Chemical mapping of a 177-nucleotide RNA with 2A3 and DMS. The data come from the RNA Mapping Database (RMDB), library OK2TST. The reactions ran in a buffer of 150 mM KOAc, 10 mM MgCl2 and 150 mM bicine (pH 8.5), at 24 C. For DMS the reverse transcriptase was MarathonRT.
RNA sequence: GGGAACGACUCGAGUAGAGUCGAAAACAGGACUUCAUCAACGACCGGCAUGUGACGUACCCGUCGAUCUAUGACCCGGCGAUGCGCACCUUGAUCGCAUUCGGUGGCAAAUACCCCACCAGCGUCAAUGGACGCAUUUUUUCGAAAAUGCGUCCAUAAAAGAAACAACAACAACAAC
Reactivity to 2A3 in 0.01 (KOAc 150mM, MgCl2 10mM, bicine 150mM(pH8.5), 24C), signal-to-noise 2, nucleotides 027 to 126: c050a030g100g030a010c020u070u040c090a110u010c030a050a080c060g160a140c010c020g000g010c010a030u060g060u090g070a020c010g010u050a080c030c040c000g060u030c020g030a110u010c010u130a040u080g090a110c010c040c000g030g000c030g020a010u050g030c040g000c050a120c040c000u070u150g050a070u170c020g020c020a050u110u130c020g070g000u010g010g010c000a120a130a100u170a060c050c010c000c000a020c020c020a010g020c020g050u020c000a010
Reactivity to DMS in 0.01 (KOAc 150mM, MgCl2 10mM, bicine 150mM(pH8.5), 24C), signal-to-noise 3, nucleotides 027 to 126: c110a140g000g020a100c070u000u010c050a030u000c090a100a070c120g000a100c040c070g000g010c060a040u000g020u000g010a040c080g000u000a110c130c070c080g020u000c010g000a070u000c050u000a050u000g010a130c180c030c020g020g030c060g000a030u000g010c150g000c080a060c070c070u000u000g000a070u000c030g020c010a110u000u000c120g000g000u000g000g020c120a080a050a110u000a140c170c120c020c020a040c030c030a090g010c040g020u000c040a050